[RMDB]
Source: RMDB library OK1LIB, as collected in RNAgym. Structure probing data (DMS and 2A3) for a 177-nucleotide construct. 2A3 adducts were read by reverse transcription with SuperScript II with manganese. The reactions ran in a buffer of 150 mM KOAc, 10 mM MgCl2 and 150 mM bicine (pH 8.5), at 24 C. For 2A3, 1,000 sequencing reads were counted.
RNA sequence: GGGAACGACUCGAGUAGAGUCGAAAAGUGACACUAUAUGAGAUUCGUGGUGUUUAGUGUUGGGUAGGGUGAUAUUUAAGGAAUAUAUCGAUAUUCAAUAUUUAAAUAUCUUUCUCAUUCUCAUUAGCUAUUAUUUAAUCUUCGGAUUAAAUAAUAGAAAAGAAACAACAACAACAAC
Reactivity to DMS in 0.01 (KOAc 150mM, MgCl2 10mM, bicine 150mM(pH8.5), 24C), signal-to-noise 2, nucleotides 027 to 126: g020u010g010a030c060a090c030u030a020u030a080u010g010a050g000a040u010u010c140g050u010g000g010u010g000u000u000u020a100g010u000g000u040u000g020g000g020u030a200g000g000g010u030g000a010u000a000u000u000u000a060a010g010g000a030a020u010a010u000a080u090c050g010a040u000a000u000u000c000a040a110u050a120u070u010u010a010a000a000u000a010u000c010u000u040u030c000u000c020a050u010u000c020u010c030a040u020u020a060g010
Reactivity to 2A3 in 0.01 (KOAc 150mM, MgCl2 10mM, bicine 150mM(pH8.5), 24C), signal-to-noise 1, nucleotides 027 to 126: g080u060g010a000c000a000c000u020a010u030a060u190g050a020g000a090u080u110c040g010u050g000g000u000g000u010u040u050a000g020u000g010u010u070g000g010g010u070a010g010g000g030u080g010a000u000a030u040u060u030a050a020g070g000a000a000u080a000u000a010u080c010g010a030u000a010u010u060c040a060a010u060a070u040u030u010a000a000a000u000a000u000c000u040u060u040c010u000c000a030u080u000c010u000c030a070u060u060a040g000